[RMDB]
RNA sequence: GGGAACGACUCGAGUAGAGUCGAAAAGUUUGGAACUCAUGUUUCAUGUUUGGAUCCAUGUAGUAGGUAUCAGGAAGUGAAUGUAAGAGUAAAUUAACAGGAGCUGCCAUGGACUGAGCAGGCCCAGCGAACGUAAGCAAUUCGUUGCUUACGUUCGAAAAGAAACAACAACAACAAC
Reactivity to DMS in 0.01 (KOAc 150mM, MgCl2 10mM, bicine 150mM(pH8.5), 24C), signal-to-noise 4, nucleotides 027 to 126: g020u010u010u000g010g030a050a060c030u010c140a110u020g010u000u000u010c030a040u000g000u010u010u000g010g020a110u000c020c010a050u020g010u000a050g030u000a020g020g020u010a060u000c060a070g010g000a120a060g020u000g010a120a060u000g020u000a080a120g010a110g000u010a040a080a110u000u010a050a100c070a080g000g010a120g000c020u000g020c030c020a040u000g000g000a090c040u000g000a040g010c050a060g000g020c010c020c000a100g000
Reactivity to 2A3 in 0.01 (KOAc 150mM, MgCl2 10mM, bicine 150mM(pH8.5), 24C), signal-to-noise 2, nucleotides 027 to 126: g040u060u100u090g040g010a010a000c030u030c170a140u210g050u020u030u020c020a010u060g080u050u040u060g090g040a160u040c020c010a030u040g000u050a100g040u000a020g130g000u080a120u160c050a050g070g070a080a070g090u040g090a150a040u100g020u100a060a030g050a040g120u090a030a090a200u090u070a050a020c020a050g000g060a010g000c010u010g010c030c000a010u020g040g000a020c030u020g000a010g010c000a020g010g090c000c010c020a020g060
Annotation:
The record gives the reactivity of an RNA of 177 nucleotides to DMS and 2A3. The reactions ran in a buffer of 150 mM KOAc, 10 mM MgCl2 and 150 mM bicine (pH 8.5), at 24 C. Values cover nucleotides 27 to 126. High DMS reactivity at an A or C suggests that its Watson-Crick edge is free. For 2A3, 2,298 sequencing reads were counted.